Notes:
The data come from the RNA Mapping Database (RMDB), library TTRDEL. Structure probing data (DMS) for a 177-nucleotide construct. The DMS profile rests on 1,448 reads. Conditions: 150 mM KOAc, 10 mM MgCl2 and 150 mM bicine (pH 8.5), 24 C. For DMS the reverse transcriptase was MarathonRT.
RNA sequence: GGGAACGACUCGAGUAGAGUCGAAAAGAUAUGGACUAUGACAUGCGUACGGAUCGGAAACGAUCCGACGCAACAGCAUAGGUCCUAAGUCAAAAGGAAAAACGUGAGUUCGCUCACGUUUUUCCAACUUAAACGCCUACUUCGGUAGGCGUUUAAGAAAAGAAACAACAACAACAAC
Reactivity to DMS in 0.01 (KOAc 150mM, MgCl2 10mM, bicine 150mM(pH8.5), 24C), signal-to-noise 2, nucleotides 027 to 126: g000a020u000a300u000g000g000a100c010u000a010u000g000a050c050a190u010g000c000g010u010a140c030g030g000a010u010c000g000g020a080a040a160c000g010a000u000c010c010g020a010c040g010c010a000a030c280a140g000c000a010u000a000g030g000u010c000c000u010a020a110g040u000c020a060a060a100a140g000g010a000a000a000a000a000c000g030u010g010a000g000u000u020c250g010c010u000c000a000c010g000u000u020u000u010u000c000c000a030a080